[RMDB]
RNA sequence: GGGAACGACUCGAGUAGAGUCGAAAAUUGCGUCGAGGCUCACUCAGAUGAAGGCCAUCAGGGACGCUCUCCUGUCGGACUUUAGGUCCACGGGAGACUUGGUGACAGUGUCCGACAAGUACCUGAGCACCUCUCUGUCGUUCGCGACAGAGAGGUGAAAAGAAACAACAACAACAAC
Reactivity to 2A3 in 0.01 (KOAc 150mM, MgCl2 10mM, bicine 150mM(pH8.5), 24C), signal-to-noise 1, nucleotides 027 to 126: u120u040g040c000g010u010c020g040a060g000g080c050u020c010a050c000u120c030a060g000a140u040g000a110a040g100g060c060c010a040u040c030a010g090g090g000a030c010g030c020u000c010u010c000c000u010g000u020c160g000g000a000c030u190u140u300a270g120g000u000c000c000a000c030g020g010g010a030g000a000c010u040u120g070g010u070g010a000c070a180g100u010g030u100c010c000g010a020c040a020a070g020u020a060c010c040u030g080a000g020
Reactivity to DMS in 0.01 (KOAc 150mM, MgCl2 10mM, bicine 150mM(pH8.5), 24C), signal-to-noise 1, nucleotides 027 to 126: u030u000g010c030g040u000c010g000a240g010g000c040u000c040a080c040u000c070a110g010a100u000g000a090a190g010g000c020c010a120u000c030a060g000g000g000a030c000g050c100u020c020u000c000c000u030g030u000c090g090g020a020c000u000u020u020a190g020g000u000c000c070a030c040g000g000g000a030g020a020c020u000u000g010g000u040g010a030c090a030g010u030g030u010c010c040g000a130c070a070a040g000u000a090c040c000u000g010a130g000
Description: The record gives the reactivity of an RNA of 177 nucleotides to 2A3 and DMS. Reactivities are given for positions 27 through 126. The RNA was probed in 150 mM KOAc, 10 mM MgCl2 and 150 mM bicine (pH 8.5) at 24 C.